Structure probing data (2A3) for a 207-nucleotide construct. The RNA was probed in 150 mM KOAc, 10 mM MgCl2 and 150 mM bicine (pH 8.5) at 24 C.
RNA sequence: GGGAACGACUCGAGUAGAGUCGAAAAGGGGUCUUUCGGUUUCUUGGAUUUACGAAAGAGGCAUGCUGAAGCCUCCACGGCAUGCUACCCACCUUUCGUUGUCAGAAAUGGCCGAAAGACGGAGGCACCCAAAUACUGGCGGUUCGCCGCCAGUAAAUGAUGGCAAUAACUUCGGUUAUUGCCAUCAAAAAGAAACAACAACAACAAC
Reactivity to 2A3 in 0.01 (KOAc 150mM, MgCl2 10mM, bicine 150mM(pH8.5), 24C), signal-to-noise 1, nucleotides 027 to 156: g070g000g110g000u000c060u030u000u000c020g000g020u130u220u160c090u090u250g200g000a120u300u300u220a020c000g030a000a010a000g010a010g020g000c000a000u000g010c020u020g000a070a020g000c000c030u010c000c020a020c000g000g000c000a000u000g000c000u020a050c070c040c040a040c000c000u000u000u000c000g000u000u030g010u000c000a020g180a300a230a040u120g060g000c020c000g000a010a000a000g000a000c000g000g000a010g000g000c000a000c020c000c000a020a020a020u100a010c000u010g000g000c010g030g030u040u060c210g060c090c000g030c000c000a000g000u000a000a010a000